[RMDB]
RNA sequence: GGGAACGACUCGAGUAGAGUCGAAAACGUCAAGGAUUCGUCCUUGACGAAAGUCGCGGCUUGAGGGCGUAUACGGCUGCGCACACAGACGACCCUCAAGCCAAACAGGUGGAUUCGUCCACCUGAACCCUAUCAUAAGGUUCGCCUUAUGAUAGGGAAAAGAAACAACAACAACAAC
Reactivity to DMS in 0.01 (KOAc 150mM, MgCl2 10mM, bicine 150mM(pH8.5), 24C), signal-to-noise 7, nucleotides 027 to 126: c020g010u000c000a010a000g000g010a050u000u010c200g020u000c000c000u000u000g000a010c000g000a030a040a090g010u010c130g020c220g010g010c010u000u000g000a020g000g000g020c120g000u000a080u000a160c100g000g000c020u000g010c050g010c140a100c180a100c070a050g000a030c010g000a190c010c000c000u000c010a010a010g020c010c010a010a040a130c020a000g000g020u000g010g000a040u000u020c180g010u000c000c000a000c000c000u000g000a040a100
Reactivity to 2A3 in 0.01 (KOAc 150mM, MgCl2 10mM, bicine 150mM(pH8.5), 24C), signal-to-noise 9, nucleotides 027 to 126: c010g000u000c000a000a000g010g010a030u050u090c200g070u040c060c000u000u000g000a000c000g000a010a000a000g070u050c040g020c110g150g000c000u000u000g000a010g010g030g000c050g040u070a080u040a130c070g060g000c030u080g040c140g040c050a050c010a000c000a060g080a030c020g270a300c000c000c000u000c000a000a000g000c000c000a000a000a000c000a000g000g000u000g000g010a020u030u050c180g050u020c040c000a000c000c000u000g000a010a010